[RMDB]
RNA sequence: GGGAACGACUCGAGUAGAGUCGAAAAAUACAAGGGGAGGUUUCGGCCCAAUGUUGUAUGCAGAAAGCGUGAGGAAGGUAGCACUUAGACACUCACGAGUAGCGGUUCGGCAGUAGUGCUAAAAUGAGACAGUACGAAAAGUUCGCUUUUCGUACAAUCUCUAUGUACAGUUCGCUGUACAUAGAGAAAAAGAAACAACAACAACAAC
Reactivity to 2A3 in 0.01 (KOAc 150mM, MgCl2 10mM, bicine 150mM(pH8.5), 24C), signal-to-noise 5, nucleotides 027 to 156: a000u120a020c030a050a080g020g010g010g020a040g010g050u020u050u060c050g060g010c000c010c000a010a020u070g020u040u030g010u060a080u090g020c040a010g100a110a050a010g070c040g010u030g020a010g020g050a080a030g060g030u060a020g020c010a010c050u040u060a040g010a050c040a010c080u040c010a030c030g000a020g020u050a020g020c060g020g030u100u070c030g030g000c010a030g030u090a000g010u020g010c010u040a020a020a020a130u080g000a020g010a030c090a070g010u000a000c000g000a000a000a010a000g030u040u060c170g050c090u010u000u000u000c000g000u000a000c000a000a000
Reactivity to DMS in 0.01 (KOAc 150mM, MgCl2 10mM, bicine 150mM(pH8.5), 24C), signal-to-noise 4, nucleotides 027 to 156: a090u000a060c060a080a090g010g000g010g020a110g010g010u000u000u000c040g020g020c010c010c030a090a120u000g030u000u010g030u000a060u000g010c030a110g010a090a110a080g000c040g040u000g010a060g010g010a090a070g040g030u000a050g010c030a080c050u000u000a110g000a140c040a110c030u000c020a070c040g010a130g020u000a070g020c010g020g020u000u000c020g000g010c040a100g020u010a040g010u000g010c030u000a020a050a060a060u000g000a180g010a090c060a090g000u000a010c000g010a010a000a020a030g010u000u010c300g030c010u000u000u000u000c000g000u010a000c000a040a060

The record gives the reactivity of an RNA of 207 nucleotides to 2A3 and DMS. As a SHAPE reagent, 2A3 marks flexible, mostly unpaired nucleotides at the ribose 2'-OH. For 2A3, 7,019 sequencing reads were counted. The RNA was probed in 150 mM KOAc, 10 mM MgCl2 and 150 mM bicine (pH 8.5) at 24 C.